[RMDB]
RNA sequence: GGGAACGACUCGAGUAGAGUCGAAAAUGCACGUGGACCGAAAGGCAGAUAAGAUGUUCUUUCUGGCGCUGCUGGGCAUAGUGUCGUGUUUUGAGAAUGUAUUUGUGGCCAGUAAACUAGAAAAUGUAGUAUACGCUUCCUGGAGUAGGGUACAGGCGCUAUUCCCGCAGUUCGCUGCGGGAAUAGCAAAAGAAACAACAACAACAAC
Reactivity to 2A3 in 0.01 (KOAc 150mM, MgCl2 10mM, bicine 150mM(pH8.5), 24C), signal-to-noise 2, nucleotides 027 to 156: u130g000c000a010c000g010u020g040g110a080c000c000g040a090a040a010g000g020c010a000g050a070u120a100a160g090a130u130g010u190u000c000u030u040u010c050u090g010g000c010g000c070u020g040c000u020g010g060g000c050a070u030a040g020u050g060u140c040g080u000g110u100u060u050u110g060a040g000a060a120u100g000u150a170u070u170u120g020u020g020g010c010c000a020g020u060a080a100a150c060u030a030g100a030a100a020a020u080g030u070a020g010u000a040u040a100c020g000c040u070u030c000c010u010g000g000a040g050u090a050g000g020g010u050a040c040a030g030g050c030
An RNA of 207 nucleotides, treated with 2A3 and read out base by base.
The RNA was probed in 150 mM KOAc, 10 mM MgCl2 and 150 mM bicine (pH 8.5) at 24 C.
Values cover nucleotides 27 to 156.
It was measured as part of the RMDB library OK3TST.
For 2A3, 627 sequencing reads were counted.